Structure probing data (2A3 and DMS) for a 207-nucleotide construct.
The RNA was probed in 150 mM KOAc, 10 mM MgCl2 and 150 mM bicine (pH 8.5) at 24 C.
The data come from the RNA Mapping Database (RMDB), library OK3TST.
The 2A3 profile rests on 1,499 reads.
RNA sequence: GGGAACGACUCGAGUAGAGUCGAAAAACUUGUGUGUGAAUUACAUCCACCCUAGUAUUAACUAUUUCAGCCUAGUCAGGAUUUAUUCUCUGAGCACUAUUUGUCAGGCACUGUGCUAGGAACUGAGUAUAGCACAAGUUAAAAACAGGGACUGUGAAGUUUUAGUGCUAUUCGUAGCACUAAAACUAAAAGAAACAACAACAACAAC
Reactivity to 2A3 in 0.01 (KOAc 150mM, MgCl2 10mM, bicine 150mM(pH8.5), 24C), signal-to-noise 4, nucleotides 027 to 156: a000c030u020u020g010u000g010u020g010u040g100a100a080u120u070a090c020a090u050c040c020a040c040c010c000u030a050g060u040a100u160u100a100a070c040u010a120u060u180u040c050a020g040c000c010u010a010g030u000c010a000g040g000a080u060u270u130a080u300u000c210u010c050u050g080a100g070c050a050c130u210a240u240u140u210g040u050c020a020g000g080c030a020c040u020g040u100g020c010u000a000g020g000a030a040c010u020g010a020g060u030a030u080a080g000c000a010c010a050a000g010u030u060a070a100a010a020a010c020a030g040g010g020a030c070u110g030u060g200a050
Reactivity to DMS in 0.01 (KOAc 150mM, MgCl2 10mM, bicine 150mM(pH8.5), 24C), signal-to-noise 3, nucleotides 027 to 156: a020c030u000u010g020u000g070u010g030u010g000a130a050u000u010a120c020a300u000c000c040a080c040c020c070u020a140g000u010a190u000u000a100a040c060u000a100u000u010u010c050a040g030c030c020u000a040g020u000c000a040g010g000a140u020u030u000a140u020u000c020u020c030u020g010a060g080c100a130c120u010a120u000u000u010g020u000c020a070g000g010c200a270c070u000g000u000g020c000u010a010g010g000a040a250c010u010g030a120g010u000a080u000a050g000c030a020c030a020a060g030u010u000a020a040a040a040a110c030a090g020g010g020a110c110u000g000u020g000a140